[RMDB]
Chemical mapping of a 177-nucleotide RNA with 2A3 and DMS. For DMS, 10,647 sequencing reads were counted. For 2A3, 5,881 sequencing reads were counted. The RNA was probed in 150 mM KOAc, 10 mM MgCl2 and 150 mM bicine (pH 8.5) at 24 C. 2A3 is a SHAPE reagent: it acylates the 2'-hydroxyl of flexible nucleotides of all four kinds.
RNA sequence: GGGAACGACUCGAGUAGAGUCGAAAACAAAAGCGAUAGUUAUUAGACCAACAGGAUUCAAAAGAGGAGAAGGAUGCCUUAGACGAGUAUUAGAUGAGAUAGAUGCUGGAGUAUAUUCUGGUGGGAGACAUUCCAUAUCCUUCGGGAUAUGGAAUGUAAAAGAAACAACAACAACAAC
Reactivity to 2A3 in 0.01 (KOAc 150mM, MgCl2 10mM, bicine 150mM(pH8.5), 24C), signal-to-noise 6, nucleotides 027 to 126: c030a000a080a020a010g110c080g090a080u110a060g090u110u080a080u090u100a060g040a080c030c000a010a040c010a020g020g030a040u020u060c040a070a050a090a010g120a030g080g030a060g020a060a070g090g010a050u070g020c000c020u030u030a060g040a080c060g020a020g050u050a060u070u100a070g060a130u080g030a030g020a090u070a070g070a020u070g000c020u020g030g030a030g070u080a040u020a040u170u040c040u050g030g000u030g030g020g000a070g000
Reactivity to DMS in 0.01 (KOAc 150mM, MgCl2 10mM, bicine 150mM(pH8.5), 24C), signal-to-noise 5, nucleotides 027 to 126: c050a060a100a070a050g000c110g020a080u000a070g000u010u020a060u020u020a070g010a090c020c030a040a070c110a060g000g000a040u010u000c070a070a060a070a110g000a090g000g000a060g010a090a070g010g010a060u030g000c020c010u010u000a080g010a140c090g000a040g010u010a030u010u020a030g010a090u010g010a070g010a080u020a010g010a060u010g000c020u000g000g010a140g000u020a060u010a070u010u020c020u000g010g010u010g010g000g010a070g010